[RMDB]
RNA sequence: GGGAACGACUCGAGUAGAGUCGAAAAUGUGGAGCGGUUCGCCGCAAGCGGCAUAGCCCGGGUCUGACCGGCAGACGGGGCCGAUGGCGGGGUCGGGGUUGGUGGCGGCGUGGAUGCUGGCGACUGCUAUUUUACAUUACUUCGGUAAUGUAAAAUAAAAAGAAACAACAACAACAAC
Reactivity to DMS in 0.01 (KOAc 150mM, MgCl2 10mM, bicine 150mM(pH8.5), 24C), signal-to-noise 9, nucleotides 027 to 126: u030g010u020g000g020a090g020c010g000g010u020u010c040g020c000c010g020c040a070a080g010c050g010g010c040a100u010a170g020c040c000c030g000g010g020u010c020u010g010a280c130c110g010g000c030a040g000a050c050g010g000g000g010c050c050g010a110u020g000g000c090g000g000g000g010u040c070g010g000g010g000u020u020g000g010u020g010g010c080g000g010c050g000u010g010g000a120u010g010c020u010g020g010c020g000a040c020u000g000c040
Reactivity to 2A3 in 0.01 (KOAc 150mM, MgCl2 10mM, bicine 150mM(pH8.5), 24C), signal-to-noise 9, nucleotides 027 to 126: u210g030u080g060g040a040g010c020g010g030u210u170c040g020c010c010g010c020a010a030g060c020g060g000c030a040u080a070g030c010c010c000g080g020g040u000c050u040g050a170c030c060g060g080c010a010g020a050c030g020g000g030g000c010c030g100a110u090g020g030c110g010g010g020g040u090c060g010g000g000g030u120u150g050g040u070g040g040c060g010g000c020g010u040g050g020a070u080g010c070u080g010g000c000g010a010c000u000g000c010